[RMDB]
RNA sequence: GGGAACGACUCGAGUAGAGUCGAAAAUAGUGGUUAUAGAUCUGAGGAUUUUGAAGAUGAAGACGCUGAACCCCAACCAGAUUUGGGGUACAGAGUUGGAAAAUAUCCUUUUGGAAAACCAAAGAAAGAAGAUUACUUCAUUCGUGAAGUAAUCUUCAAAAGAAACAACAACAACAAC
Reactivity to 2A3 in 0.01 (KOAc 150mM, MgCl2 10mM, bicine 150mM(pH8.5), 24C), signal-to-noise 5, nucleotides 027 to 126: u160a020g120u060g030g020u060u040a160u070a230g110a130u090c050u040g020a010g010g020a020u010u100u100u140g140a170a110g070a150u100g030a050a020g020a020c000g000c030u010g020a040a030c000c000c000c000a010a020c030c110a030g010a110u050u030u010g000g000g000g000u000a010c000a000g020a020g010u000u000g060g020a040a100a000a030u110a010u020c000c000u020u040u120u080g070g010a080a100a000a000c000c000a010a060a000g140a020a110a010
Reactivity to DMS in 0.01 (KOAc 150mM, MgCl2 10mM, bicine 150mM(pH8.5), 24C), signal-to-noise 3, nucleotides 027 to 126: u020a120g000u000g010g000u000u020a090u050a130g010a150u030c030u000g000a030g000g030a020u000u030u010u010g030a110a090g010a130u010g010a300a170g010a000c040g020c010u000g000a080a010c010c010c010c000a000a030c170c220a180g010a200u020u000u000g020g000g010g010u010a040c010a010g000a060g000u000u000g000g000a080a030a040a060u030a020u000c000c000u000u000u010u010g000g010a190a030a040a060c010c000a010a070a060g000a030a110a150